[RMDB]
Structure probing data (2A3 and DMS) for a 170-nucleotide construct.
RNA sequence: GGGAACGACUCGAGUAGAGUCGAAAACCUCCCCAUCCUUGUCCUUUCUUAUUAUUCCUCGGAUGUUCCCCAGCCAGGGAUUGUCCUCCUCGAGUCUCUUGAGAUUCUUGUUGACCUUCCGGAGCUCACAGCCGACCGUUCGCGGUCGGCAAAAGAAACAACAACAACAAC
Reactivity to 2A3 in 0.01 (KOAc 150mM, MgCl2 10mM, bicine 150mM(pH8.5), 24C), signal-to-noise 2, nucleotides 027 to 129: c010c000u090c000c000c030c040a060u040c000c010u100u090g020u120c000c000u080u130u040c000u060u070a140u080u010a080u100u080c000c000u000c020g020g000a060u110g060u000u000c020c010c000c000a050g040c080c070a030g040g000g000a020u020u030g010u000c000c000u040c010c000u050c020g020a000g050u000c000u030c000u050u060g020a050g000a060u060u040c010u090u040g020u080u080g060a070c000c000u000u030c000c000g010g000a000g000c000u040c020a070c040a020
Reactivity to DMS in 0.01 (KOAc 150mM, MgCl2 10mM, bicine 150mM(pH8.5), 24C), signal-to-noise 2, nucleotides 027 to 129: c010c000u010c010c030c000c000a070u090c000c080u040u000g000u140c040c070u090u000u000c080u040u020a140u000u000a170u000u000c000c040u050c080g080g030a160u010g080u000u030c060c000c020c040a000g220c090c020a060g010g020g010a130u010u130g010u020c020c100u000c030c030u040c010g110a110g010u040c050u020c020u000u050g020a040g000a040u000u020c030u000u020g020u050u000g000a110c150c000u060u060c010c010g000g060a160g030c030u000c040a030c120a110
It was measured as part of the RMDB library 15KLIB.